[RMDB]
This 177-nucleotide RNA was probed chemically with DMS and 2A3.
The reactions ran in a buffer of 150 mM KOAc, 10 mM MgCl2 and 150 mM bicine (pH 8.5), at 24 C.

RNA sequence: GGGAACGACUCGAGUAGAGUCGAAAAUACAAGCAGGACACUUGUUUUUUUCAGCAGGCUUUACCUGGUUUUGGUUCAAAAUUUGAUCAACAGCAUAUCUGCCCUGUUGGUAAGCGUAGUGUGCCAACGGGUAGAUGCGAUUCGUCGCAUCUACCCGAAAAGAAACAACAACAACAAC
Reactivity to DMS in 0.01 (KOAc 150mM, MgCl2 10mM, bicine 150mM(pH8.5), 24C), signal-to-noise 3, nucleotides 027 to 126: u000a100c090a060a140g010c120a110g000g000a110c080a060c020u000u010g020u000u000u000u000u000u000u000c040a100g010c070a050g000g000c050u000u000u000a040c210c040u000g000g000u000u010u010u000g000g000u000u000c110a040a090a070a120u000u020u010g010a020u010c030a020a050c040a030g000c180a080u010a060u000c050u000g010c100c050c010u000g040u000u000g010g010u000a030a070g020c060g000u000a010g010u000g000u000g000c010c010a080a100
Reactivity to 2A3 in 0.01 (KOAc 150mM, MgCl2 10mM, bicine 150mM(pH8.5), 24C), signal-to-noise 2, nucleotides 027 to 126: u170a010c040a040a090g090c110a080g040g070a010c010a010c020u040u000g100u090u150u020u020u020u090u120c000a010g020c020a050g070g000c050u060u050u050a040c010c010u010g090g000u080u070u100u140g050g040u030u040c040a070a110a220a300u130u160u170g040a030u030c000a010a050c010a010g030c020a030u030a010u130c010u030g010c050c000c030u010g000u000u000g020g030u020a040a020g050c040g050u010a000g010u040g080u100g210c010c010a030a000